[RMDB]
An RNA of 177 nucleotides, treated with DMS and 2A3 and read out base by base. DMS adducts were read by reverse transcription with MarathonRT. The DMS profile rests on 12,171 reads. The reactions ran in a buffer of 150 mM KOAc, 10 mM MgCl2 and 150 mM bicine (pH 8.5), at 24 C.
RNA sequence: GGGAACGACUCGAGUAGAGUCGAAAAGAUAUGGAGAAUGACAUGAUCUCUAAUCGGAAACGAUUAACGUGAGAUCAACAGCAUUUCUCCUAAGUCAAACCACUUUCAUGUUCGCAUGAAAGUGGAACCUACACAUAAACUUCGGUUUAUGUGUAGGAAAAGAAACAACAACAACAAC
Reactivity to DMS in 0.01 (KOAc 150mM, MgCl2 10mM, bicine 150mM(pH8.5), 24C), signal-to-noise 8, nucleotides 027 to 126: g000a030u000a300u010g000g010a010g010a020a000u000g000a080c090a280u000g010a000u000c000u000c000u000a020a010u000c000g000g000a130a070a200c000g020a010u000u000a030a130c290g020u000g010a010g000a010u000c000a030a070c240a160g000c020a010u000u000u000c000u000c000c000u000a020a080g000u000c030a100a110a230c000c000a000c000u000u000u000c000a000u000g010u000u010c240g020c000a010u000g000a000a010a010g010u000g000g000a010a020
Reactivity to 2A3 in 0.01 (KOAc 150mM, MgCl2 10mM, bicine 150mM(pH8.5), 24C), signal-to-noise 9, nucleotides 027 to 126: g030a020u080a040u140g000g000a010g010a010a010u030g050a110c050a120u090g010a010u010c010u000c020u040a020a010u010c010g030g000a050a050a040c020g010a010u050u060a130a100c300g150u180g050a010g000a000u010c010a010a050c040a020g060c010a010u120u190u050c000u000c000c010u010a110a010g060u030c040a060a060a120c000c000a000c000u000u010u000c010a010u000g050u050u080c250g030c180a000u000g000a000a000a000g000u000g000g000a000a000